[RMDB]
The record gives the reactivity of an RNA of 177 nucleotides to DMS and 2A3.
Reactivities are given for positions 27 through 126.
The RNA was probed in 150 mM KOAc, 10 mM MgCl2 and 150 mM bicine (pH 8.5) at 24 C.
The DMS profile rests on 1,290 reads.
The 2A3 profile rests on 2,158 reads.
RNA sequence: GGGAACGACUCGAGUAGAGUCGAAAAGAAACAUGGUUCGCCAUGUUUCAAAGAAGCUCAUAAUGACGCAAACAACGGCGUCGGCGUGAGCAAACGGCGAAAAAAGACUUAUCUUCGGAUAAGUCAACGUCAAGCAUAUGUUCGCAUAUGCUUGACGAAAAGAAACAACAACAACAAC
Reactivity to DMS in 0.01 (KOAc 150mM, MgCl2 10mM, bicine 150mM(pH8.5), 24C), signal-to-noise 2, nucleotides 027 to 126: g000a010a000a010c000a010u010g000g010u000u000c200g070c000c000a020u010g010u000u000u000c000a020a040a160g010a130a130g020c000u000c000a030u030a070a300u040g000a030c000g000c000a050a050a240c270a090a130c220g000g000c010g000u000c000g000g010c300g000u010g000a050g000c000a030a020a100c150g020g000c110g000a000a020a070a030a160a060g000a020c000u000u000a000u000c000u000u000c180g000g000a010u000a000a000g020u000c000a040a050
Reactivity to 2A3 in 0.01 (KOAc 150mM, MgCl2 10mM, bicine 150mM(pH8.5), 24C), signal-to-noise 2, nucleotides 027 to 126: g000a000a000a000c010a010u010g000g030u050u020c080g040c070c000a010u000g010u010u000u010c000a000a000a010g070a060a020g000c000u000c010a010u030a040a010u030g000a000c000g030c020a030a220a300c170a170a110c120g110g000c000g000u000c000g000g000c000g000u010g000a000g000c000a000a010a000c030g090g010c070g040a190a020a020a000a010a000g000a000c000u000u010a000u010c010u030u100c250g040g000a000u020a010a000g000u020c000a010a000